RNA sequence: GGGAACGACUCGAGUAGAGUCGAAAAGGGGUCGUCACAAUGAUGGUCCAUGAGCGACGAUCAUACACUGAAGCCUCCACGGUGUAUGGGAGCUCGUGGACUUGAGUGACGACGGAGGCACCCAAAAGCAUUCUAUGGAUUCGUCCAUAGAAUGCAAGAAUCAGUUAGUCUUCGGACUAACUGAUUCAAAAGAAACAACAACAACAAC
Reactivity to DMS in 0.01 (KOAc 150mM, MgCl2 10mM, bicine 150mM(pH8.5), 24C), signal-to-noise 1, nucleotides 027 to 156: g050g000g000g020u000c030g000u020c010a030c000a160a190u050g040a140u000g040g020u020c010c000a050u000g010a020g010c000g010a060c260g020a140u000c000a020u030a050c000a030c030u010g000a060a160g010c110c040u010c020c020a300c080g020g030u010g030u020a000u000g010g000g000a070g000c010u010c010g020u000g010g010a000c010u010u000g020a150g000u010g000a030c100g000a010c010g010g030a050g100g020c060a080c010c030c010a080a140a160a190g000c010a000u010u000c000u020a030u010g020g020a080u000u010c300g020u000c000c000a020u000a010g010a000a010u000g010c010a000a040
Reactivity to 2A3 in 0.01 (KOAc 150mM, MgCl2 10mM, bicine 150mM(pH8.5), 24C), signal-to-noise 5, nucleotides 027 to 156: g080g020g050g030u020c010g000u000c000a010c020a100a300u040g000a000u000g020g010u000c000c000a010u010g000a000g000c010g300a300c010g000a010u000c000a000u000a000c000a000c000u040g040a100a010g010c000c000u000c010c000a010c010g010g000u000g000u000a000u010g000g000g010a000g000c010u000c000g010u020g000g000a000c000u000u000g000a000g000u010g000a000c010g010a000c000g000g000a000g000g020c020a030c000c000c010a030a140a000a010g000c000a000u000u000c000u010a000u000g000g010a010u040u080c250g080u010c110c000a000u000a000g000a000a000u000g000c000a000a030
Conditions: 150 mM KOAc, 10 mM MgCl2 and 150 mM bicine (pH 8.5), 24 C. Structure probing data (DMS and 2A3) for a 207-nucleotide construct. The DMS profile rests on 2,255 reads. The data come from the RNA Mapping Database (RMDB), library RNAMAK.